[RMDB]
RNA sequence: GGGAACGACUCGAGUAGAGUCGAAAACAGGCGAUUCGUCGCCUGAAAAAAUCCUAAGUCUCCGUUUGACGCGUCUGACAUGCUCAGUAUCGGAAACGAUACGAGCAACAGCAGACGCCGAGGAGAUAUGGAAAAAAACAUCCGUUCGCGGAUGUAAGAAUAUGUACUGAUUCGUCAGUACAUAUUCAAAAGAAACAACAACAACAAC
Reactivity to DMS in 0.01 (KOAc 150mM, MgCl2 10mM, bicine 150mM(pH8.5), 24C), signal-to-noise 4, nucleotides 027 to 156: c020a030g000g020c000g010a050u010u000c300g060u000c000g030c010c000u010g000a000a010a060a130a070a070u000c010c000u010a040a170g020u000c010u000c010c010g010u000u010u010g020a130c160g010c000g040u000c000u000g010a070c060a300u020g010c000u010c000a130g060u000a010u000c000g010g010a180a080a260c000g000a000u000a010c000g000a010g010c000a010a020c090a160g010c000a010g000a030c000g040c010c010g020a100g000g010a020g050a010u000a040u000g000g010a020a000a090a080a060a120a080c000a000u000c000c000g020u000u000c300g050c020g030g020a020u000g020u000a010a130
Reactivity to 2A3 in 0.01 (KOAc 150mM, MgCl2 10mM, bicine 150mM(pH8.5), 24C), signal-to-noise 5, nucleotides 027 to 156: c000a000g000g000c010g010a020u040u120c210g050u020c000g120c000c000u000g010a000a010a000a000a000a010u030c020c000u040a110a040g020u000c010u000c020c020g080u070u180u230g050a060c050g010c000g000u000c000u010g050a170c020a090u050g000c000u010c040a060g000u000a000u000c010g060g000a110a040a060c020g000a010u000a000c010g000a000g000c000a020a020c020a030g040c000a000g000a000c000g000c000c000g010a010g000g010a000g000a000u020a010u030g010g040a080a060a020a010a000a000a010c000a000u010c010c000g020u060u070c290g010c020g110g000a000u010g010u020a020a030